[RMDB]
RNA sequence: GGGAACGACUCGAGUAGAGUCGAAAAACUCCAGUACUACGGUACUGGAGAGUUUGCCAGAAAUUCGUCGGUAAGCAGAUUUGCAUUGAUUUACGUCAUCACUGAGCGCAGCGUACGCGCUGCGCAACUUCAUAUCGUGAUUCGUCACGAUAUGAAGAAAAGAAACAACAACAACAAC
Reactivity to DMS in 0.01 (KOAc 150mM, MgCl2 10mM, bicine 150mM(pH8.5), 24C), signal-to-noise 5, nucleotides 027 to 126: a080c000u000c000c000a000g020u000a000c000u000a090c190g030g010u000a000c000u010g000g000a000g020a010g010u010u000u000g000c020c020a150g010a100a070a110u010u010c070g010u010c040g020g010u000a040a080g020c030a060g000a090u020u010u000g000c050a080u000u020g000a070u010u010u030a100c120g000u000c070a050u000c050a070c110u000g010a150g000c020g040c010a010g020c020g030u000a080c250g020c020g020c000u000g010c010g020c000a010a030
Reactivity to 2A3 in 0.01 (KOAc 150mM, MgCl2 10mM, bicine 150mM(pH8.5), 24C), signal-to-noise 9, nucleotides 027 to 126: a000c000u000c000c000a000g000u000a000c000u010a020c200g130g000u000a000c000u000g010g000a000g010a000g000u010u070u040g080c010c000a040g100a050a140a060u220u130c080g040u030c030g060g040u070a080a020g020c030a040g080a270u130u120u180g060c070a070u020u120g050a060u090u120u190a090c100g040u030c030a060u060c010a040c140u130g090a040g040c000g000c000a000g000c000g010u040a040c220g000c000g000c070u000g000c000g000c000a000a010